[RMDB]
RNA sequence: GGGAACGACUCGAGUAGAGUCGAAAAGAUCUUGUCAGGUCGGCAGGUAUAGCCAGCACGGGCCGAAAGUAGGCGCUUGGAAGAACUCCCGCCCAUGUUUCAGGUUUCCGAAUUUUAUAGGCGCGUGGGUGAUAAUUCUUUUCGAAGAAUUAUCACCAAAAGAAACAACAACAACAAC
Reactivity to DMS in 0.01 (KOAc 150mM, MgCl2 10mM, bicine 150mM(pH8.5), 24C), signal-to-noise 6, nucleotides 027 to 126: g000a080u000c020u000u010g010u020c060a100g010g010u000c050g020g030c040a030g010g010u010a080u010a120g000c040c040a150g000c050a050c060g000g000g000c020c010g010a030a050a050g010u010a090g010g010c300g010c080u010u020g010g010a050a060g000a100a170c090u000c040c010c030g000c030c030c030a100u010g010u000u000u000c020a040g000g010u000u000u010c010c000g010a070a120u010u040u010u030a070u010a150g000g000c020g000c050g020u010g000
Reactivity to 2A3 in 0.01 (KOAc 150mM, MgCl2 10mM, bicine 150mM(pH8.5), 24C), signal-to-noise 5, nucleotides 027 to 126: g030a040u030c010u060u060g050u090c030a040g070g060u070c020g000g020c010a010g030g030u110a070u110a130g040c010c010a010g000c030a010c020g020g060g000c010c010g030a060a070a040g040u070a040g050g000c020g000c040u030u060g040g020a050a040g020a100a080c020u010c000c010c000g010c010c010c000a060u080g070u010u010u030c020a020g030g000u020u100u020c000c010g000a010a010u090u120u110u150a170u100a060g010g010c040g000c020g150u050g080